[RMDB]
An RNA of 177 nucleotides, treated with 2A3 and DMS and read out base by base. The reactions ran in a buffer of 150 mM KOAc, 10 mM MgCl2 and 150 mM bicine (pH 8.5), at 24 C.
RNA sequence: GGGAACGACUCGAGUAGAGUCGAAAAGAAGGUACCAACAAACACUGACGAUCGGUGAGCGUCAGUGGAACUCACCGUAAACAAAAGCUCAACGUGGAGCAAACACGAACAAAGGUACCGAAAGAAAGGGAUACUGUUUCUUCGGAAACAGUAUCCCAAAAGAAACAACAACAACAAC
Reactivity to 2A3 in 0.01 (KOAc 150mM, MgCl2 10mM, bicine 150mM(pH8.5), 24C), signal-to-noise 1, nucleotides 027 to 126: g070a070a050g040g020u000a000c000c080a030a200c030a020a110a060c020a000c080u060g000a000c000g020a020u150c000g010g050u130g020a050g000c050g000u000c060a080g040u150g000g020a020a020c000u000c160a140c000c000g070u000a020a040a040c140a030a070a000a000g100c040u020c020a000a100c060g110u080g120g000a060g050c090a030a000a000c040a020c060g030a170a000c000a030a130a000g000g000u000a000c000c000g020a060a060a010g060a000a080a020
Reactivity to DMS in 0.01 (KOAc 150mM, MgCl2 10mM, bicine 150mM(pH8.5), 24C), signal-to-noise 1, nucleotides 027 to 126: g040a040a170g000g000u000a000c000c000a120a150c160a140a060a180c010a040c100u000g000a000c000g000a030u040c000g000g000u000g000a080g000c050g030u000c040a000g010u000g000g020a010a000c040u010c000a020c180c000g000u000a000a000a010c300a000a090a010a030g000c040u000c000a100a070c070g000u000g030g070a050g000c080a250a160a190c010a000c040g000a050a150c180a000a120a120g000g000u000a150c050c000g010a040a270a050g000a020a020a050
Background: For DMS the reverse transcriptase was MarathonRT. The DMS profile rests on 960 reads.